[RMDB]
RNA sequence: GGGAACGACUCGAGUAGAGUCGAAAAAUUCAGUACAAGACUUUUGAGGCUAUAAUGAUGAGGAAUAUGGCUGAAGCUGAAGGCUUUAACCUGCCAAAGAGUGGAACUACCAUCAAUGAGUUACACCCAGACUCUGUCAUUAACAUCUUGAUGGAAGAAUAAAGUGAAUAUUCGUAUUCACUUUAUUAAAAGAAACAACAACAACAAC
Reactivity to DMS in 0.01 (KOAc 150mM, MgCl2 10mM, bicine 150mM(pH8.5), 24C), signal-to-noise 5, nucleotides 027 to 156: a130u000u000c040a090g030u000a080c050a070a120g010a060c040u010u000u010u000g010a110g020g020c030u000a130u000a060a080u000g020a060u000g010a080g010g000a090a080u000a060u000g020g050c010u000g010a030a060g020c030u000g030a130a140g020g010c010u000u000u000a030a030c020c040u000g000c060c050a050a090a100g010a080g010u000g020g000a050a060c040u000a100c030c010a050u000c050a030a050u010g010a100g010u000u000a070c060a100c040c070c030a300g010a070c030u000c030u010g000u000c030a090u000u000a040a060c060a100u000c060u000u010g010a040u000g000g010a100a120g000
Reactivity to 2A3 in 0.01 (KOAc 150mM, MgCl2 10mM, bicine 150mM(pH8.5), 24C), signal-to-noise 6, nucleotides 027 to 156: a000u100u070c020a000g010u040a050c020a050a090g070a110c050u080u120u130u170g050a050g010g000c030u040a020u020a210a150u110g090a050u070g030a040g020g040a090a050u060a060u130g030g000c010u020g010a020a000g000c020u060g050a060a020g060g000c000u040u030u040a030a060c010c020u050g010c010c010a070a080a020g080a040g040u090g010g020a030a030c030u060a070c040c000a020u020c010a030a050u140g000a010g020u020u020a030c060a050c040c040c050a040g020a150c050u040c060u160g040u030c010a040u070u130a060a070c010a140u030c020u040u010g000a000u010g010g030a010a020g040
Structure probing data (DMS and 2A3) for a 207-nucleotide construct. Values cover nucleotides 27 to 156. The reactions ran in a buffer of 150 mM KOAc, 10 mM MgCl2 and 150 mM bicine (pH 8.5), at 24 C. The DMS profile rests on 13,632 reads.